About this RNA:
An RNA of 177 nucleotides, treated with 2A3 and DMS and read out base by base. For DMS the reverse transcriptase was MarathonRT. For 2A3, 1,624 sequencing reads were counted. DMS (dimethyl sulfate) methylates the pairing face of unpaired adenines and cytosines.

RNA sequence: GGGAACGACUCGAGUAGAGUCGAAAAGCGGCGCGCGAGCCACGCCGCGUAAUGGAUGAGCCGCAGCGUGCGCAGCGCCUCGAUCAGAUGCAGCUCGCGCGGAUCGAAUUCGCAGAAGUCCUCGUAACUCGUCCGAUAAUUUCGAUUAUCGGACGAGAAAAGAAACAACAACAACAAC
Reactivity to 2A3 in 0.01 (KOAc 150mM, MgCl2 10mM, bicine 150mM(pH8.5), 24C), signal-to-noise 2, nucleotides 027 to 126: g020c000g000g000c010g000c010g020c000g070a000g070c040c010a010c020g030c010c020g020c010g010u040a120a080u230g150g080a100u140g090a050g070c040c000g000c020a010g030c000g030u110g070c130g000c060a010g000c000g000c000c020u030c020g000a070u090c030a060g040a120u160g000c000a010g040c030u030c040g000c010g000c020g000g000a050u060c040g020a040a140u200u080c060g000c040a050g010a240a000g100u050c010c020u040c030g040u040a070a100
Reactivity to DMS in 0.01 (KOAc 150mM, MgCl2 10mM, bicine 150mM(pH8.5), 24C), signal-to-noise 2, nucleotides 027 to 126: g010c010g010g000c040g040c010g010c000g000a050g010c020c040a050c040g020c010c010g000c010g000u010a070a050u000g040g000a090u000g000a110g010c190c010g000c020a070g010c020g010u000g030c160g020c110a140g000c010g010c160c040u000c010g000a050u010c050a110g020a060u010g010c000a150g010c040u020c030g010c010g010c020g000g000a040u010c040g030a090a170u000u000c060g000c040a190g010a100a130g010u010c020c000u010c120g030u000a110a140
2A3 adducts were read by reverse transcription with SuperScript II with manganese. Conditions: 150 mM KOAc, 10 mM MgCl2 and 150 mM bicine (pH 8.5), 24 C. Reactivities are rounded to 0.1 and cut off at 0 and 3.